[RMDB]
RNA sequence: GGGAACGACUCGAGUAGAGUCGAAAAGAUAUGGAUAAGCAGGAAGUGGAGCUGGCGGUCGGAAACGACCGGCAGCGAUGAAAUGGAAGCUUAUCCUAAGUCAAAUCAUGCUGUUCGCAGCAUGAAACCUUGUGUUCUUCUUCGGAAGAACACAAGGAAAAGAAACAACAACAACAAC
Reactivity to 2A3 in 0.01 (KOAc 150mM, MgCl2 10mM, bicine 150mM(pH8.5), 24C), signal-to-noise 1, nucleotides 027 to 126: g020a000u060a020u090g010g000a010u000a020a000g010c070a060g130g150a160a050g060u060g010g070a050g000c030u030g120g300c000g030g000u010c000g000g070a070a060a050c010g000a000c010c000g020g040c000a000g000c000g030a030u000g000a020a090a010u060g060g010a060a000g010c000u000u000a020u000c000c000u000a090a000g040u010c050a070a030a100u070c000a000u000g020c050u000g050u030u050c300g000c200a000g020c000a000u000g000a040a010a010
Reactivity to DMS in 0.01 (KOAc 150mM, MgCl2 10mM, bicine 150mM(pH8.5), 24C), signal-to-noise 1, nucleotides 027 to 126: g030a010u000a300u000g000g020a040u000a000a030g050c020a030g050g020a300a120g020u000g000g000a020g030c000u000g000g020c030g000g010u000c020g000g000a090a040a160c020g010a000c020c000g000g000c000a000g000c000g030a030u010g020a080a110a010u030g000g020a160a130g000c020u000u000a000u000c000c000u000a040a060g000u010c000a080a060a140u000c000a000u020g040c000u000g020u000u030c260g010c000a020g000c000a010u000g000a000a070a170
Chemical mapping of a 177-nucleotide RNA with 2A3 and DMS. The reactions ran in a buffer of 150 mM KOAc, 10 mM MgCl2 and 150 mM bicine (pH 8.5), at 24 C. For 2A3 the reverse transcriptase was SuperScript II with manganese.